[RMDB]
RNA sequence: GGGAACGACUCGAGUAGAGUCGAAAAAACUGAGAAUGUACAUCACCUCAGGACCACUAUUGUACAAAUUGAUUGUAAAACGUGUGUUUGAACAAUAUGAAAUCAGUGCACCUUGAAAAAAAACAGAGUAACAGCGAUUUUCAGGGAACAAGGGAAACAAAAUUAGGAGUUUCGACUCCUAAUUUUGAAAAGAAACAACAACAACAAC
Reactivity to 2A3 in 0.01 (KOAc 150mM, MgCl2 10mM, bicine 150mM(pH8.5), 24C), signal-to-noise 2, nucleotides 027 to 156: a000a010c040u050g000a020g010a090a120u200g030u100a040c040a140u100c070a050c010c000u010c000a020g040g020a010c000c030a010c040u080a070u140u140g030u030a030c020a060a080a050u110u100g060a100u030u090g070u090a040a080a040a080c110g060u080g050u050g040u110u020u050g030a070a020c030a020a020u080a040u240g080a090a020a100u100c070a050g040u030g100c070a020c020c020u030u050g040a060a000a000a000a020a020a020a020c100a000g140a010g100u120a040a070c010a020g070c010g040a000u000u000u030u050c030a000g050g000g000a000a020c020a020a070g060g010g040a080a070a020
Reactivity to DMS in 0.01 (KOAc 150mM, MgCl2 10mM, bicine 150mM(pH8.5), 24C), signal-to-noise 2, nucleotides 027 to 156: a040a070c010u000g000a050g010a230a040u000g000u000a140c080a170u010c040a110c100c010u000c010a070g000g000a300c000c010a050c060u000a090u010u000g010u000a030c010a060a100a180u000u020g000a130u000u000g040u000a070a040a010a020c060g010u060g020u000g030u010u000u010g000a060a170c080a070a130u000a080u000g010a060a070a090u000c040a110g000u000g010c070a110c020c000u000u020g000a000a030a000a030a050a070a090a060c050a090g010a130g010u010a060a090c090a180g020c030g000a260u000u000u010u000c000a010g000g010g010a130a110c080a020a050g000g000g000a100a050a120